[RMDB]
RNA sequence: GGGAACGACUCGAGUAGAGUCGAAAAAUUUAGAUAUGGAUCAUGAACUACUUGCCAAGGCUAGGACGAAGCAAAUUCGGAAACGAAUUUGAUGGACCGGCCGGCAAGCAUGAUCCUAAGUCGACAACAUCUAGGCAAAGUUCGCUUUGCCUAGAUGAAAAGAAACAACAACAACAAC
Reactivity to 2A3 in 0.01 (KOAc 150mM, MgCl2 10mM, bicine 150mM(pH8.5), 24C), signal-to-noise 2, nucleotides 027 to 126: a020u210u230u170a050g000a000u080a060u110g000g000a000u010c030a010u000g010a050a060c070u160a050c000u300u030g060c000c030a300a280g000g000c010u110a300g080g000a160c090g080a150a020g040c030a000a000a010u010u000c000g000g000a030a020a030c010g000a000a000u000u010u020g110a130u080g030g080a140c000c010g000g010c000c000g000g000c010a000a000g020c000a000u000g020a000u000c000c010u020a010a000g000u000c020g050a030c030a040a050
Reactivity to DMS in 0.01 (KOAc 150mM, MgCl2 10mM, bicine 150mM(pH8.5), 24C), signal-to-noise 2, nucleotides 027 to 126: a110u040u000u000a090g000a020u000a300u000g000g000a020u000c000a000u000g020a100a010c030u040a300c020u010u000g000c020c020a200a170g000g040c000u000a050g050g010a300c130g030a120a150g000c000a000a000a030u010u000c000g000g000a060a030a120c000g020a010a020u000u000u000g000a090u010g000g010a090c010c000g010g000c030c000g010g000c000a000a000g020c010a030u000g020a020u000c000c000u000a000a070g000u000c000g000a200c270a090a230